Background:
This 177-nucleotide RNA was probed chemically with DMS and 2A3. The RNA was probed in 150 mM KOAc, 10 mM MgCl2 and 150 mM bicine (pH 8.5) at 24 C. For DMS the reverse transcriptase was MarathonRT. High DMS reactivity at an A or C suggests that its Watson-Crick edge is free.
RNA sequence: GGGAACGACUCGAGUAGAGUCGAAAAACUUUAUGUCGGGUUGGUAAAAACCCUUAUGAUGGUGAUGUAUCACUAGACAAUAACCGGAUGGGUAAAGUCUUUAAAAUGAUCGAGGGGAAAAUUAACCGAUCAUGUAAUCUUUCGAGAUUACAUGAUCAAAAGAAACAACAACAACAAC
Reactivity to DMS in 0.01 (KOAc 150mM, MgCl2 10mM, bicine 150mM(pH8.5), 24C), signal-to-noise 5, nucleotides 027 to 126: a020c010u000u000u000a000u000g020u000c020g020g010g010u010u000g000g010u020a050a080a070a130a070c020c000c010u000u010a060u020g020a070u000g010g000u000g040a050u010g000u020a080u010c010a010c050u000a020g010a030c010a030a140u000a080a090c040c020g020g020a100u040g010g010g020u000a040a080a210g000u000c010u000u010u010a040a020a110a060u010g000a040u000c070g010a040g010g000g010g000a050a040a020a080u010u010a080a160c160c080
Reactivity to 2A3 in 0.01 (KOAc 150mM, MgCl2 10mM, bicine 150mM(pH8.5), 24C), signal-to-noise 7, nucleotides 027 to 126: a000c050u170u050u010a050u160g300u030c020g000g010g000u010u020g020g040u080a020a030a040a080a100c000c000c000u000u040a150u080g040a000u050g010g090u010g010a030u050g130u190a140u130c010a010c030u000a000g000a010c020a060a110u110a100a040c030c010g190g090a200u230g130g020g010u030a040a050a030g000u000c000u010u100u050a110a160a080a080u210g020a030u060c050g010a030g010g000g020g040a020a020a020a120u100u060a070a040c020c040